[RMDB]
RNA sequence: GGGAACGACUCGAGUAGAGUCGAAAACAGUUACACUUCGGUGUAACUGACAGGCGAUGCCAGCAUCAACAACAACAACAGGGAGAUGCAUCCCUAACGCCAAAACCGCGCGCUUCGGCGCGCGGAACCGUAGAUAACAGUUCGCUGUUAUCUACGGAAAAGAAACAACAACAACAAC
Reactivity to 2A3 in 0.01 (KOAc 150mM, MgCl2 10mM, bicine 150mM(pH8.5), 24C), signal-to-noise 1, nucleotides 027 to 126: c000a000g000u000u010a010c010a000c010u070u090c240g100g000u020g000u000a000a000c000u000g000a020c030a040g030g000c040g040a030u110g090c070c010a030g020c020a010u010c000a000a070c010a000a040c030a020a020c020a030a050c030a060g080g070g010a100g000a030u090g000c020a080u030c000c000c010u010a050a030c010g040c040c000a030a130a060a030c000c030g000c000g000c050g000c030u050u120c300g130g000c090g000c030g000c000g010g000a000a000